[RMDB]
RNA sequence: GGGAACGACUCGAGUAGAGUCGAAAAGAAACGCAUGUAAGGAUGGGAAUCAUGCGGAAAGAAAAGGCCAUCCGAUGUCAGGAAUAAACUCUCGAAUAACUGACGGAGAGGAUUCUAGAAAAGAAAACCCAUAUGUUAACUUCGGUUAACAUAUGGGAAAAGAAACAACAACAACAAC
Reactivity to DMS in 0.01 (KOAc 150mM, MgCl2 10mM, bicine 150mM(pH8.5), 24C), signal-to-noise 6, nucleotides 027 to 126: g010a090a090a160c060g010c010a010u000g020u020a100a080g000g000a010u000g020g000g000a160a080u010c030a020u010g000c000g010g010a040a110a150g020a090a050a090a090g000g030c000c000a010u010c000c010g010a060u040g000u010c050a300g000g020a040a050u000a050a070a090c050u000c020u000c010g010a170a060u000a070a140c250u040g000a120c170g000g000a020g000a030g010g010a060u010u010c020u000a090g000a060a050a070a100g000a050a070a080a090
Reactivity to 2A3 in 0.01 (KOAc 150mM, MgCl2 10mM, bicine 150mM(pH8.5), 24C), signal-to-noise 4, nucleotides 027 to 126: g090a010a100a010c010g010c000a010u010g010u010a080a060g040g010a050u060g000g000g000a060a150u100c040a000u030g010c060g020g050a130a150a010g080a000a090a000a000g050g040c020c000a010u000c000c030g030a040u130g040u120c030a010g000g100a040a060u130a170a210a100c010u010c000u020c040g050a080a080u160a220a040c100u120g080a050c080g080g000a020g000a030g000g020a000u030u000c020u100a060g110a090a080a010a000g180a010a090a030a020